[RMDB]
RNA sequence: GGGAACGACUCGAGUAGAGUCGAAAAACUACCUAGCUACGGCUAGGUAGAAUCUGAUCCAUGAUGACUUCCAAACACAUGUGGACUGUUGGAUGAAGCAUGCGGAUAUGGGACUGAGAUCAGACAAGUUUUUAUAACUCUUCGGAGUUAUAAAAACAAAAGAAACAACAACAACAAC
Reactivity to 2A3 in 0.01 (KOAc 150mM, MgCl2 10mM, bicine 150mM(pH8.5), 24C), signal-to-noise 9, nucleotides 027 to 126: a000c000u000a000c000c000u000a000g000c000u020a030c250g130g000c000u000a000g000g000u000a000g000a000a000u010c000u000g010a010u000c010c020a060u120g050a090u100g060a080c050u060u000c010c000a040a080a030c010a010c000a020u020g020u040g030g050a030c050u090g200u300u220g180g080a200u100g020a030a000g000c010a000u010g010c050g060g020a050u060a170u230g030g000g010a010c020u030g030a030g000a160u010c000a000g020a030c010a050a030
Reactivity to DMS in 0.01 (KOAc 150mM, MgCl2 10mM, bicine 150mM(pH8.5), 24C), signal-to-noise 8, nucleotides 027 to 126: a060c000u000a010c000c010u010a000g010c000u000a100c250g020g000c000u000a000g010g000u000a010g000a040a070u000c010u000g010a020u000c000c030a060u020g000a150u020g000a150c180u000u000c000c000a040a130a080c080a090c010a010u000g000u000g000g000a300c140u020g020u030u010g010g000a040u020g000a300a190g000c000a010u000g010c040g010g000a130u020a120u010g010g020g000a060c090u000g000a110g010a010u010c000a020g010a040c300a070a090